Record summary:
The record gives the reactivity of an RNA of 177 nucleotides to DMS and 2A3.
RNA sequence: GGGAACGACUCGAGUAGAGUCGAAAAUGCUCCACCAAGUCUACAUUCCAUGCCGUCCCGGUCCAUAUUUGGGACCGGCUUAUGCUUUUUGGUGCCACCUUGGACGACCAGGCCUUUUGCUGCUCGCUACUAGCGACAACUUCGGUUGUCGCUAGUAAAAAGAAACAACAACAACAAC
Reactivity to DMS in 0.01 (KOAc 150mM, MgCl2 10mM, bicine 150mM(pH8.5), 24C), signal-to-noise 2, nucleotides 027 to 126: u010g000c050u010c030c000a090c030c040a070a070g010u010c020u020a070c140a120u000u000c090c040a060u000g040c040c060g020u000c140c000c010g000g000u020c040c020a120u000a120u000u000u000g020g020g010a010c040c020g000g000c140u000u010a050u010g010c040u000u000u010u010u020g010g000u000g020c020c020a050c080c080u000u010g010g000a090c100g010a100c010c050a060g000g000c040c020u000u000u000u020g030c040u000g010c050u000c070g010c230
Reactivity to 2A3 in 0.01 (KOAc 150mM, MgCl2 10mM, bicine 150mM(pH8.5), 24C), signal-to-noise 1, nucleotides 027 to 126: u070g030c010u000c000c010a040c010c030a040a000g030u010c030u010a040c050a080u050u090c030c010a020u130g000c020c000g130u110c000c010c000g000g000u030c030c010a080u110a300u230u130u150g080g000g000a000c010c010g000g000c000u030u060a070u040g050c000u050u020u000u010u150g070g000u030g060c000c010a070c000c010u040u020g090g000a050c060g020a000c040c000a010g030g040c020c010u090u020u090u030g010c010u030g000c000u010c040g000c020
2A3 adducts were read by reverse transcription with SuperScript II with manganese.